[RMDB]
RNA sequence: GGGAACGACUCGAGUAGAGUCGAAAAGAUAUGGAGGAGAGCAGGGAGAUCGCGAUCGGAAACGAUCGGUGGAUCAUCGAUCUGUCCUCCUCCUAAGUCAAAACAUCGCAGGUUCGCCUGCGAUGAAGUAAGAUUGUCAGUUCGCUGACAAUCUUACAAAAGAAACAACAACAACAAC
Reactivity to 2A3 in 0.01 (KOAc 150mM, MgCl2 10mM, bicine 150mM(pH8.5), 24C), signal-to-noise 3, nucleotides 027 to 126: g020a010u020a030u070g000g000a000g000g020a010g000a020g040c000a000g070g030g060a200g020a020u000c030g000c000g130a000u000c000g020g010a030a020a020c010g000a010u010c020g050g090u210g270g020a020u010c010a050u300c060g150a150u010c000u010g040u090c010c010u000c000c000u000c000c000u000a000a010g000u010c020a010a000a040a140c010a000u010c000g000c000a000g020g050u100u190c250g150c130c010u000g000c000g000a000u000g000a020a000
Reactivity to DMS in 0.01 (KOAc 150mM, MgCl2 10mM, bicine 150mM(pH8.5), 24C), signal-to-noise 3, nucleotides 027 to 126: g010a030u000a270u010g000g000a030g000g020a020g000a070g000c000a000g000g000g010a130g000a020u000c010g000c000g020a010u000c000g010g010a100a050a140c010g000a000u000c000g020g050u010g040g010a030u000c010a250u000c270g000a120u000c010u010g000u000c030c000u000c000c000u000c000c000u000a000a050g010u000c020a120a100a160a220c020a010u000c000g020c000a010g000g010u000u030c300g010c000c000u000g020c000g010a000u000g000a010a110
The data come from the RNA Mapping Database (RMDB), library TTRDES. The record gives the reactivity of an RNA of 177 nucleotides to 2A3 and DMS. The RNA was probed in 150 mM KOAc, 10 mM MgCl2 and 150 mM bicine (pH 8.5) at 24 C. In probing experiments dimethyl sulfate is read out at A N1 and C N3, which are open when not base-paired. For 2A3, 9,096 sequencing reads were counted.